Notes
This 177-nucleotide RNA was probed chemically with DMS.

RNA sequence: GGGAACGACUCGAGUAGAGUCGAAAAUUUAUUAUUCGUGCGUACAUUGACUUCUUUCUGAGCCGCUGGGAAUAUCACACGUGUACCACUGAUGGUCAUAGCAGCAUACGUUGGGAUGUUGCCAACACACGUUCACACGGUUCGCCGUGUGAACGUGAAAAGAAACAACAACAACAAC
Reactivity to DMS in 0.01 (KOAc 150mM, MgCl2 10mM, bicine 150mM(pH8.5), 24C), signal-to-noise 2, nucleotides 027 to 126: u000u000u000a080u060u000a110u010u010c110g040u020g030c090g000u020a060c050a070u000u000g030a040c180u000u000c040u000u010u000c070u000g000a080g050c000c080g010c020u020g000g000g000a090a030u010a040u020c090a070c140a070c100g000u000g040u000a030c000c010a060c100u000g020a050u000g030g040u000c170a060u000a100g030c030a030g000c040a030u000a000c120g010u010u000g010g010g020a060u000g010u000u000g010c020c010a040a030c160a160